[RMDB]
Chemical mapping of a 170-nucleotide RNA with DMS and 2A3. Reactivities are given for positions 27 through 129.

RNA sequence: GGGAACGACUCGAGUAGAGUCGAAAAAGAGAAGGGAGACUCCGGAACUCCUGCCAUUUGAGGGACGAAGCCGCCACCGGGCGCUCCCCUCGGACCUCCUCUGGAGGGGUUCACAUCCCCAACCCGCUGCGAUAGUACUUCGGUACUAUCAAAAGAAACAACAACAACAAC
Reactivity to DMS in 0.01 (KOAc 150mM, MgCl2 10mM, bicine 150mM(pH8.5), 24C), signal-to-noise 9, nucleotides 027 to 129: a080g000a080g020a150a120g030g040g000a080g000a090c080u040c150c110g000g010a060a050c000u020c000c020u000g040c040c030a050u000u000u000g000a010g010g010g000a080c030g010a050a050g000c110c030g030c010c030a130c190c140g010g040g000c030g000c090u020c020c010c000c040u000c030g010g000a090c030c020u020c000c000u010c040u000g020g020a060g020g000g000g060u000u000c020a070c070a110u040c020c000c000c030a080a070c010c000c010g010c100u040g000c280
Reactivity to 2A3 in 0.01 (KOAc 150mM, MgCl2 10mM, bicine 150mM(pH8.5), 24C), signal-to-noise 9, nucleotides 027 to 129: a000g140a010g040a090a120g020g040g010a120g020a030c050u070c130c080g050g000a020a000c000u010c010c000u070g300c010c020a040u030u030u070g010a010g000g000g000a000c020g030a050a010g050c100c020g040c050c030a140c140c080g100g030g000c010g010c030u120c010c010c000c010u000c000g000g000a000c000c000u020c000c000u030c020u010g000g000a010g000g000g000g000u010u010c010a020c010a080u020c010c010c010c000a020a080c000c000c000g050c080u090g010c040
For DMS, 90,524 sequencing reads were counted.
It was measured as part of the RMDB library 15KLIB.